[RMDB]
RNA sequence: GGGAACGACUCGAGUAGAGUCGAAAAAGACAUACGUUCGCGUAUGUCUGACGGCCACCUGACCCUAAGGAAAUGCUCUAUGACAGGACACACUGAUUGUGAUACCUCGAGAUUUCGAUCUCGAGAACAUUUUCACCAACUUCGGUUGGUGAAAAUGAAAAGAAACAACAACAACAAC
Reactivity to DMS in 0.01 (KOAc 150mM, MgCl2 10mM, bicine 150mM(pH8.5), 24C), signal-to-noise 3, nucleotides 027 to 126: a040g000a000c000a000u010a010c000g000u000u020c260g010c000g040u000a000u000g010u000c000u010g020a090c160g020g030c040c050a040c030c020u000g000a110c010c020c020u010a100a080g000g010a050a080a030u010g000c060u000c040u000a070u010g010a120c080a060g010g010a080c020a050c060a060c060u010g010a100u000u010g010u000g010a140u010a110c220c010u000c020g000a010g000a020u000u000u020c130g000a020u000c000u000c000g000a000g010a050a100
Reactivity to 2A3 in 0.01 (KOAc 150mM, MgCl2 10mM, bicine 150mM(pH8.5), 24C), signal-to-noise 2, nucleotides 027 to 126: a000g000a000c000a000u000a000c010g000u020u080c190g000c000g120u010a000u000g000u010c000u020g000a020c000g040g030c000c000a060c000c020u030g050a050c030c000c000u070a090a050g080g000a040a120a020u090g040c030u000c040u070a060u110g090a030c020a030g000g070a020c000a000c000a010c060u080g110a280u180u110g020u000g100a070u120a120c010c010u010c000g010a010g020a010u040u030u180c160g030a010u000c000u010c010g000a000g000a000a000
Notes
The record gives the reactivity of an RNA of 177 nucleotides to DMS and 2A3. The data come from the RNA Mapping Database (RMDB), library M2PK50. For 2A3, 1,566 sequencing reads were counted. High 2A3 reactivity points to a flexible backbone, as in loops and unpaired stretches. Conditions: 150 mM KOAc, 10 mM MgCl2 and 150 mM bicine (pH 8.5), 24 C. DMS adducts were read by reverse transcription with MarathonRT.